Annotation:
An RNA of 177 nucleotides, treated with 2A3 and DMS and read out base by base. Reactivities are given for positions 27 through 126. For 2A3 the reverse transcriptase was SuperScript II with manganese. The RNA was probed in 150 mM KOAc, 10 mM MgCl2 and 150 mM bicine (pH 8.5) at 24 C. High DMS reactivity at an A or C suggests that its Watson-Crick edge is free. For 2A3, 24,297 sequencing reads were counted.
[RMDB]
RNA sequence: GGGAACGACUCGAGUAGAGUCGAAAACUGCCGACGCCCUGUGUUGAGGCGUGGUGUCGCCUCGAGUCAGUCGUUGAGAUCCGAAGAAGGGUGUACUUCUGACUGAUCGAGCAGAAGUGAGUCGAGGGCGUCUGCCUAGGUUCGCCUGGGUGGGCGCAAAAGAAACAACAACAACAAC
Reactivity to 2A3 in 0.01 (KOAc 150mM, MgCl2 10mM, bicine 150mM(pH8.5), 24C), signal-to-noise 5, nucleotides 027 to 126: c010u010g010c000c000g040a010c000g000c000c000c020u030g020u000g020u040u160g070a040g010g030c000g000u010g010g020u030g010u020c010g000c000c000u000c000g000a010g070u020c000a000g000u000c000g000u000u000g000a030g010a030u000c000c000g020a090a030g070a050a090g050g000g000u020g020u030a070c000u000u000c020u050g010a010c000u000g000a010u010c000g010a000g000c000a010g010a130a010g060u060g020a010g030u010c010g010a020g000g050
Reactivity to DMS in 0.01 (KOAc 150mM, MgCl2 10mM, bicine 150mM(pH8.5), 24C), signal-to-noise 9, nucleotides 027 to 126: c030u010g000c040c010g000a040c020g010c020c010c020u010g010u010g010u010u010g010a110g010g010c020g010u000g000g010u010g010u000c040g010c050c000u000c000g010a070g010u020c010a020g000u000c010g010u010u000g000a230g010a030u000c020c030g020a210a100g020a140a130g000g010g010u020g020u040a060c010u000u000c000u030g020a080c080u000g010a040u000c050g000a120g000c040a050g010a080a080g010u010g000a090g000u000c010g000a120g000g000